[RMDB]
The data come from the RNA Mapping Database (RMDB), library OK1LIB.
An RNA of 177 nucleotides, treated with 2A3 and DMS and read out base by base.
2A3 adducts were read by reverse transcription with SuperScript II with manganese.
For DMS, 4,936 sequencing reads were counted.
Conditions: 150 mM KOAc, 10 mM MgCl2 and 150 mM bicine (pH 8.5), 24 C.

RNA sequence: GGGAACGACUCGAGUAGAGUCGAAAAGAAGUGGGAUUGAAUUCAACCACAAGCUCGUUCUACCAACAUGAGUUUGGGUAGUUCGAGCGAUUAGUCUUGACGAGCCUUUGCUGGCGUCUUGACGAGAGGGAUGGUGCAGGUUCGCCUGUACCAUCCCAAAAGAAACAACAACAACAAC
Reactivity to 2A3 in 0.01 (KOAc 150mM, MgCl2 10mM, bicine 150mM(pH8.5), 24C), signal-to-noise 7, nucleotides 027 to 126: g190a090a040g000u020g010g030g040a140u090u160g110a150a260u200u060c040a030a030c000c000a010c010a010a010g000c000u000c000g000u000u000c000u000a000c000c000a020a050c030a110u300g080a120g220u090u090u120g170g000g000u000a000g000u000u010c000g000a000g000c000g000a000u000u060a010g000u000c000u000u010g000a010c060g040a040g090c030c020u110u150u220g120c250u130g020g020c000g010u010c000u000u000g020a010c030g010a010g040a050
Reactivity to DMS in 0.01 (KOAc 150mM, MgCl2 10mM, bicine 150mM(pH8.5), 24C), signal-to-noise 2, nucleotides 027 to 126: g000a070a080g030u000g000g000g020a110u040u040g000a130a100u010u080c110a120a120c000c000a030c020a110a100g010c000u000c000g030u010u000c000u010a000c010c000a040a040c020a220u080g000a220g020u030u010u050g000g000g020u000a000g000u000u000c000g010a000g010c020g000a010u050u010a050g000u000c010u000u000g010a000c030g010a170g000c000c160u000u020u050g000c110u000g000g060c000g010u010c000u000u010g000a020c010g000a080g010a150